[RMDB]
The record gives the reactivity of an RNA of 207 nucleotides to 2A3 and DMS. For DMS, 4,039 sequencing reads were counted. In probing experiments dimethyl sulfate is read out at A N1 and C N3, which are open when not base-paired. The 2A3 profile rests on 4,532 reads. The reactions ran in a buffer of 150 mM KOAc, 10 mM MgCl2 and 150 mM bicine (pH 8.5), at 24 C.
RNA sequence: GGGAACGACUCGAGUAGAGUCGAAAAAAUGUUCCGCAUGCGAUUGCUUUUCGGGCAACGACGGUGCCGUGCUUUCCUCGGUAGCAUCAUCGUGGGUUCCUGAGGUAACAUUAUCUGAGGAGACAGCAUCUCCUACCUGCUCGCCAGCUUCGGAUGAGGUUUGACAUAAUUUCGAUUAUGUCAAACCAAAAGAAACAACAACAACAAC
Reactivity to 2A3 in 0.01 (KOAc 150mM, MgCl2 10mM, bicine 150mM(pH8.5), 24C), signal-to-noise 5, nucleotides 027 to 156: a000a020u170g000u030u010c010c000g020c010a020u090g040c000g080a100u060u080g010c020u070u120u110u140c060g020g020g000c020a040a030c040g090a030c050g020g000u010g040c070c050g040u040g050c010u080u080u070c000c010u030c030g010g010u050a020g040c050a060u110c010a050u060c080g070u090g030g080g000u070u060c010c030u050g060a020g020g030u080a090a060c050a140u140u150a060u110c070u090g040a000g010g010a010g030a030c050a020g020c020a050u010c010u000c010c000u010a060c010c020u010g010c000u020c020g020c020c030a030g010c000u010u050c030g040g020a030u060g030a040
Reactivity to DMS in 0.01 (KOAc 150mM, MgCl2 10mM, bicine 150mM(pH8.5), 24C), signal-to-noise 3, nucleotides 027 to 156: a050a060u010g020u010u000c010c020g060c030a070u000g020c040g010a100u000u000g000c000u040u000u000u010c070g030g030g030c020a090a050c030g010a090c130g010g020u000g030c000c030g010u000g000c020u010u000u000c050c040u010c070g030g040u000a070g020c060a070u000c020a050u000c060g040u000g030g010g010u000u000c020c000u000g020a070g000g020u010a040a090c070a140u000u010a030u010c000u000g040a080g020g030a060g050a030c010a110g010c000a300u000c000u000c000c010u000a080c020c000u000g020c000u000c060g020c060c150a100g000c030u010u000c050g030g020a070u000g000a300